The record gives the reactivity of an RNA of 207 nucleotides to 2A3.
[RMDB]
RNA sequence: GGGAACGACUCGAGUAGAGUCGAAAAUGGAGUAUGAAAUCCGCCUCUGCCUUCCAGGCUUUUCCAGUGCCAAGACCUGCGGGGCCACCAAUUGUGAGUCCCCUCCCGCACUGACUACUCCCUCAACAGGACAGGAGGGAAGCUGAACCUGUCGGGACCCUGGUAAUAUUUUCGAAUAUUACCAGGGAAAAGAAACAACAACAACAAC
Reactivity to 2A3 in 0.01 (KOAc 150mM, MgCl2 10mM, bicine 150mM(pH8.5), 24C), signal-to-noise 2, nucleotides 027 to 156: u100g030g000a030g030u160a080u130g110a100a050a080u060c050c030g030c040c000u060c060u050g030c000c000u100u000c020c020a020g010g000c020u050u030u050u000c030c000a000g000u020g010c030c080a060a080g050a110c040c080u120g040c090g010g020g000g020c010c000a040c000c050a220a240u200u230g010u010g060a070g110u170c020c000c000c000u010c000c000c010g000c010a000c000u000g010a010c000u070a030c010u050c010c010c000u030c050a070a130c030a080g040g100a080c000a020g000g050a000g040g060g020a010a010g010c020u000g000a020a030c000c020u040g050u080c000g010g000g050a040
Overview: 2A3 adducts were read by reverse transcription with SuperScript II with manganese. Values cover nucleotides 27 to 156. It was measured as part of the RMDB library OK3TST. The RNA was probed in 150 mM KOAc, 10 mM MgCl2 and 150 mM bicine (pH 8.5) at 24 C.